The data come from the RNA Mapping Database (RMDB), libraries RFM100 and RFMREP. Structure probing data (2A3 and DMS) for a 177-nucleotide construct. High 2A3 reactivity points to a flexible backbone, as in loops and unpaired stretches. For DMS the reverse transcriptase was MarathonRT. The reactions ran in a buffer of 150 mM KOAc, 10 mM MgCl2 and 150 mM bicine (pH 8.5), at 24 C.
RNA sequence: GGGAACGACUCGAGUAGAGUCGAAAAACGAUUUGCUUCUUCCUCUAACUGAGUAAUUUCUUCUUCUGUUAACUCUUCCGUAGUAAUGUGAAUAUGUAACUCUUUUUGUGUGCUUUUCAUAGGUGCCCACAUACACCUGGUUCGCCAGGUGUAUGUGAAAAGAAACAACAACAACAAC
Reactivity to 2A3 in 0.01 (KOAc 150mM, MgCl2 10mM, bicine 150mM(pH8.5), 24C), signal-to-noise 7, nucleotides 027 to 126: a010c070g030a070u040u020u120g030c010u030u040c000u020u000c010c010u000c040u040a090a070c040u030g030a000g080u070a060a160u050u060u030c030u040u000c000u050u000c020u030g070u090u070a090a060c020u020c000u120u030c040c030g090u060a040g040u030a090a170u110g040u040g080a060a010u100a040u220g060u070a090a080c020u030c000u090u070u040u120u170g100u040g020u030g050c010u040u030u030u040c050a050u090a100g050g000u090g020c000c000
Reactivity to DMS in 0.01 (KOAc 150mM, MgCl2 10mM, bicine 150mM(pH8.5), 24C), signal-to-noise 4, nucleotides 027 to 126: a110c100g000a120u000u020u030g000c050u010u000c010u000u000c010c010u000c020u010a060a120c090u010g000a080g010u020a060a070u010u010u000c030u000u000c040u000u000c020u000g020u010u010a060a100c070u000c020u000u000c020c030g020u010a070g000u000a090a050u010g030u010g000a080a070u010a050u000g010u000a050a070c060u000c020u000u000u010u010u000g000u010g010u000g000c020u000u000u000u030c110a040u030a050g010g010u010g010c000c040